[RMDB]
RNA sequence: GGGAACGACUCGAGUAGAGUCGAAAAGAUAUGGAACAAGACUUCGAUAAGGACGUAUCGGAAACGAUACCGUCCUUUUGACGAAGCUUGUUCCUAAGUCAAACGGCCAUAGUUCGCUAUGGCCGAACAACGUUGAUAACUUCGGUUAUCAACGUUGAAAAGAAACAACAACAACAAC
Reactivity to 2A3 in 0.01 (KOAc 150mM, MgCl2 10mM, bicine 150mM(pH8.5), 24C), signal-to-noise 2, nucleotides 027 to 126: g020a000u040a000u070g000g010a000a000c010a000a160g300a300c000u020u000c020g290a300u130a300a000g000g000a000c010g000u000a000u010c000g000g000a000a020a000c000g010a000u010a010c010c000g060u000c000c030u000u010u010u060g110a050c000g000a010a000g000c000u000u000g000u000u020c000c000u000a000a000g000u000c020a110a000a160c020g000g000c000c010a010u000a000g040u070u120c300g000c200u000a010u000g000g000c000c010g000a010a010
Reactivity to DMS in 0.01 (KOAc 150mM, MgCl2 10mM, bicine 150mM(pH8.5), 24C), signal-to-noise 4, nucleotides 027 to 126: g010a040u000a150u010g000g000a010a010c000a010a010g010a170c010u000u000c000g020a170u020a020a010g000g010a010c000g010u000a000u000c000g020g000a050a050a070c000g010a010u000a010c230c200g030u000c000c000u000u000u000u000g010a240c060g010a030a010g000c010u000u010g010u000u000c000c000u000a000a050g010u000c030a110a150a300c030g010g000c000c000a000u000a010g020u000u010c260g030c020u000a010u000g000g010c000c000g010a020a060